[RMDB]
Structure probing data (DMS and 2A3) for a 207-nucleotide construct. The data come from the RNA Mapping Database (RMDB), library PDB130.
RNA sequence: GGGAACGACUCGAGUAGAGUCGAAAACGCAUCGUUCGCGAUGCGAAAGCGGAAGUAGUUCAGUGGUAGAACACCUACUGGCCCGAAAGGGUGGAACCCCAGUAGGGGGUCGCGGGUUCGAGUCCCGUCUUCCGCAAAAGCGCUUGUUCGCAAGCGCCCAACAGUUGCUCUUCGGAGCAACUGUUGGAAAAGAAACAACAACAACAAC
Reactivity to DMS in 0.01 (KOAc 150mM, MgCl2 10mM, bicine 150mM(pH8.5), 24C), signal-to-noise 1, nucleotides 027 to 156: c030g040c000a030u000c000g080u010u030c300g010c010g010a000u030g000c000g000a030a000a080g000c010g010g000a000a200g010u000a100g030u000u000c010a250g000u040g030g030u000a040g000a060a030c000a100c030c000u000a030c040u010g030g030c010c060c050g000a200a040a150g000g000g000u000g000g000a130a280c110c040c000c000a070g030u000a010g000g000g030g000g060u000c010g000c000g000g000g030u000u000c000g040a300g010u000c030c000c000g000u000c000u000u000c000c010g080c010a000a010a110a040g000c000g030c000u000u000g000u000u000c300g000c010a010a010g010c030g010c000
Reactivity to 2A3 in 0.01 (KOAc 150mM, MgCl2 10mM, bicine 150mM(pH8.5), 24C), signal-to-noise 1, nucleotides 027 to 156: c000g000c000a010u010c010g060u080u050c190g000c010g060a000u000g010c000g030a160a040a010g000c000g000g010a020a020g000u020a000g020u010u000c030a020g030u030g170g210u120a020g000a020a000c000a010c020c000u000a000c000u000g060g000c050c000c000g070a130a040a050g040g030g010u110g080g090a080a110c000c020c010c060a000g000u020a000g000g030g000g000g030u120c010g010c000g000g000g000u000u000c000g000a000g000u020c010c000c000g000u010c000u000u000c000c000g000c010a000a000a010a010g000c000g000c000u010u000g020u080u130c140g010c100a000a000g000c000g000c000